This 177-nucleotide RNA was probed chemically with DMS and 2A3. The 2A3 profile rests on 3,224 reads. For DMS, 1,828 sequencing reads were counted. For 2A3 the reverse transcriptase was SuperScript II with manganese. It was measured as part of the RMDB library TTRDES. The reactions ran in a buffer of 150 mM KOAc, 10 mM MgCl2 and 150 mM bicine (pH 8.5), at 24 C. Values cover nucleotides 27 to 126.
[RMDB]
RNA sequence: GGGAACGACUCGAGUAGAGUCGAAAAAAAAGAUAUGGAUAGCGACAUGGCUUGGCUGCCUAUAAUCUCUAAUCGGAAACGAUUAGAGGUAGGCAGCACAAGCCAACAGCGCUAUCCUAAGUCAAAACCUAUGCUAAAACUUCGGUUUUAGCAUAGGAAAAGAAACAACAACAACAAC
Reactivity to DMS in 0.01 (KOAc 150mM, MgCl2 10mM, bicine 150mM(pH8.5), 24C), signal-to-noise 2, nucleotides 027 to 126: a120a090a110a140g000a060u010a300u000g010g000a030u020a000g040c000g000a080c090a170u000g040g030c000u000u000g000g000c000u000g000c000c000u020a080u000a300a040u000c000u010c000u000a000a000u010c000g000g000a170a110a160c020g000a010u000u000a010g000a010g020g010u000a000g000g000c000a000g000c000a020c000a000a000g030c000c000a020a000c210a130g000c030g000c000u000a000u000c000c000u000a010a080g000u000c020a140a030a110a120
Reactivity to 2A3 in 0.01 (KOAc 150mM, MgCl2 10mM, bicine 150mM(pH8.5), 24C), signal-to-noise 1, nucleotides 027 to 126: a000a000a000a000g060a010u090a060u150g010g000a010u000a010g010c000g080a110c080a160u090g000g010c000u000u020g000g000c000u000g000c000c010u130a170u070a220a300u050c020u000c000u010a010a010u010c030g000g080a100a030a100c010g000a000u010u010a000g010a000g030g000u000a000g000g000c020a010g000c000a000c000a040a000g000c000c000a000a000c000a000g010c010g020c010u030a000u000c000c000u000a010a020g040u000c020a030a040a050a050